An RNA of 177 nucleotides, treated with 2A3 and read out base by base. The reactions ran in a buffer of 150 mM KOAc, 10 mM MgCl2 and 150 mM bicine (pH 8.5), at 24 C. The 2A3 profile rests on 491 reads.
RNA sequence: GGGAACGACUCGAGUAGAGUCGAAAAGCCUGUGAGUCGUUCGAGUCACUGGAAGAGACGGACUGCACUCGUUAGAAUAUCUGAGAAGUCGAACGCUCAACGGGACACUCAGACACUGCGAGCGGAACUACCCCGGCGAGUUCGCUCGCCGGGGUAGAAAAGAAACAACAACAACAAC
Reactivity to 2A3 in 0.01 (KOAc 150mM, MgCl2 10mM, bicine 150mM(pH8.5), 24C), signal-to-noise 1, nucleotides 027 to 126: g090c010c010u050g000u020g000a020g010u230c060g010u040u010c020g000a000g120u060c060a060c060u000g090g020a060a060g060a020g020a050c000g050g000a000c030u060g000c070a030c010u060c000g040u000u090a050g050a200a260u090a040u110c050u070g060a030g000a260a000g050u040c000g000a030a070c050g000c000u030c000a060a000c010g020g000g010a000c000a030c030u190c010a020g040a020c000a080c070u070g070c000g050a010g010c020g000g020a040a090